[RMDB]
Background: Structure probing data (2A3) for a 207-nucleotide construct. The 2A3 profile rests on 655 reads. Reactivities are given for positions 27 through 156. For 2A3 the reverse transcriptase was SuperScript II with manganese. Values are in units of 0.01, from 0 to 300, in steps of 10. Conditions: 150 mM KOAc, 10 mM MgCl2 and 150 mM bicine (pH 8.5), 24 C.
RNA sequence: GGGAACGACUCGAGUAGAGUCGAAAAUAAGAAAAAUAAACAUGUGGUGGUAGUCCGCCACUCUAAGGGGACGCCUUUAGAAGAAGAGGCUAGGUGGUAUUCCGGUGUGGGAUACUUGGUAAUAUGUAAGGGGAUGGUACGUUCGCGUACCAUCCAAGCUAAACAUCCUGUUCGCAGGAUGUUUAGCAAAAGAAACAACAACAACAAC
Reactivity to 2A3 in 0.01 (KOAc 150mM, MgCl2 10mM, bicine 150mM(pH8.5), 24C), signal-to-noise 1, nucleotides 027 to 156: u130a000a020g060a010a100a000a050a050u250a090a130a020c120a130u190g000u000g000g000u000g000g120u030a010g010u000c010c000g010c000c000a020c010u010c000u000a000a000g020g000g040g000a020c100g120c000c000u030u000u030a000g020a020a000g010a000a000g040a080g040g000c000u000a020g060g000u060g010g000u030a020u030u020c040c030g110g140u220g090u260g130g000g060a030u030a000c010u030u060g010g020u160a130a070u150a160u300g100u090a060a080g000g100g010g000a000u000g000g000u010a080c000g000u000u040c260g000c000g070u000a000c000c000a000u000c000c000a000a000